[RMDB]
RNA sequence: GGGAACGACUCGAGUAGAGUCGAAAACACUCAGAGCCAAGUUUGCCUGGAGCUUUGGGCUAAGACACUAGUCAUUUCAGGCAAUGGAAGAGAAAGUAAAGGACGGUGUCUACUUUGACGUGAAAGAGGUAAAUAAUGAUUUCGAUCAUUAUUUACCAAAAGAAACAACAACAACAAC
Reactivity to DMS in 0.01 (KOAc 150mM, MgCl2 10mM, bicine 150mM(pH8.5), 24C), signal-to-noise 9, nucleotides 027 to 126: c110a100c020u000c020a030g010a050g010c010c050a090a130g010u000u000u000g010c000c000u000g010g010a110g010c200u000u010u010g010g010g010c050u010a060a060g010a050c050a030c050u000a080g020u000c010a090u000u000u000c020a030g000g010c020a030a040u000g010g030a170a090g000a120g010a100a090a120g010u010a060a070a100g000g010a050c050g000g000u000g010u000c010u000a140c120u010u000u000g010a060c150g020u010g010a050a070a100g000a160
Reactivity to 2A3 in 0.01 (KOAc 150mM, MgCl2 10mM, bicine 150mM(pH8.5), 24C), signal-to-noise 9, nucleotides 027 to 126: c030a010c010u020c020a020g010a010g060c010c020a070a040g050u030u050u050g010c000c000u010g020g010a030g010c020u100u110u120g050g010g010c020u070a070a020g060a010c010a010c050u050a090g010u010c020a070u020u060u060c010a010g000g000c000a010a020u060g020g030a080a050g040a020g050a130a110a020g080u190a070a090a060g100g010a010c020g000g020u020g010u010c000u010a020c020u070u100u130g080a060c070g050u060g130a080a070a040g120a030
The record gives the reactivity of an RNA of 177 nucleotides to DMS and 2A3.
The reactions ran in a buffer of 150 mM KOAc, 10 mM MgCl2 and 150 mM bicine (pH 8.5), at 24 C.
The DMS profile rests on 31,629 reads.
Source: RMDB library OK2TST, as collected in RNAgym.
High 2A3 reactivity points to a flexible backbone, as in loops and unpaired stretches.